[RMDB]
RNA sequence: GGGAACGACUCGAGUAGAGUCGAAAACGGGCGUAGAUGUCGAGAGACAUUGAGCGCGGUGAUCGCUGCGCCUAGGUGUUAUCCCUAGGGUGUUAGGCAGUGGAUCUCUGACAGCCGGAAGGGAUGACCGCGUAUCGAGCUUCGGCUUGAUACGCGGAAAAGAAACAACAACAACAAC
Reactivity to 2A3 in 0.01 (KOAc 150mM, MgCl2 10mM, bicine 150mM(pH8.5), 24C), signal-to-noise 5, nucleotides 027 to 126: c020g030g030g000c020g030u060a010g020a000u010g010u000c010g010a010g000a000g000a070c000a000u000u040g040a060g040c080g000c000g010g050u060g000a030u010c000g000c010u020g000c030g150c000c000u010a010g000g030u060g090u260u190a150u220c020c000c000u000a000g030g010g000u120g130u220u150a080g070g000c000a000g010u050g160g050a020u000c020u000c010u050g040a040c040a050g050c010c010g040g060a040a020g080g010g010a030u040g080a060
Reactivity to DMS in 0.01 (KOAc 150mM, MgCl2 10mM, bicine 150mM(pH8.5), 24C), signal-to-noise 3, nucleotides 027 to 126: c050g000g000g010c010g050u020a130g010a010u000g010u000c000g010a230g010a230g000a010c020a020u010u000g010a090g030c000g010c010g010g000u010g000a020u010c020g020c000u000g020c000g000c020c010u020a020g000g010u030g020u030u010a080u030c140c000c000u010a130g010g010g000u010g000u000u030a060g010g010c050a070g000u020g000g020a050u000c030u000c040u010g020a080c130a070g010c020c030g000g040a100a100g010g000g010a050u030g010a160